[RMDB]
RNA sequence: GGGAACGACUCGAGUAGAGUCGAAAAUCGUUUUCUCUUAUUCGCCCUCAAAGAAGAGCGUCCUAGAUAUUAAGACUAUAUAUAUUUGUGGGUGUAUAGUUUUGUCUGGGAGCAGACGGAGGAGACGGGAUAAUUUAUUAUUCGUAAUAAAUUAUCCAAAAGAAACAACAACAACAAC
Reactivity to DMS in 0.01 (KOAc 150mM, MgCl2 10mM, bicine 150mM(pH8.5), 24C), signal-to-noise 3, nucleotides 027 to 126: u040c000g020u000u010u010u000c000u000c000u000u000a110u020u020c020g000c030c000c010u040c050a140a140a150g000a120a070g010a050g010c030g000u010c000c020u010a000g000a030u000a080u060u030a070a090g000a010c010u010a010u000a000u000a010u020a150u010u010u010g000u030g020g010g050u010g000u000a000u000a000g000u000u000u000u000g010u000c000u010g010g030g000a190g010c070a140g000a070c150g000g010a010g000g000a000g000a010c040g010
Reactivity to 2A3 in 0.01 (KOAc 150mM, MgCl2 10mM, bicine 150mM(pH8.5), 24C), signal-to-noise 6, nucleotides 027 to 126: u100c000g000u000u000u020u000c000u000c000u000u060a100u080u070c030g020c000c000c000u020c060a130a110a020g120a060a030g030a020g000c010g080u000c000c000u000a010g010a010u070a040u090u170a040a010g000a000c000u000a000u010a000u000a010u010a090u030u100u110g100u090g070g110g000u010g000u000a000u000a000g000u000u000u040u060g000u000c010u000g010g010g030a040g040c020a020g030a030c070g000g000a000g010g000a010g000a000c010g010
Source: RMDB library OK1LIB, as collected in RNAgym. The record gives the reactivity of an RNA of 177 nucleotides to DMS and 2A3. For DMS the reverse transcriptase was MarathonRT. The RNA was probed in 150 mM KOAc, 10 mM MgCl2 and 150 mM bicine (pH 8.5) at 24 C. For 2A3, 7,268 sequencing reads were counted. Values cover nucleotides 27 to 126.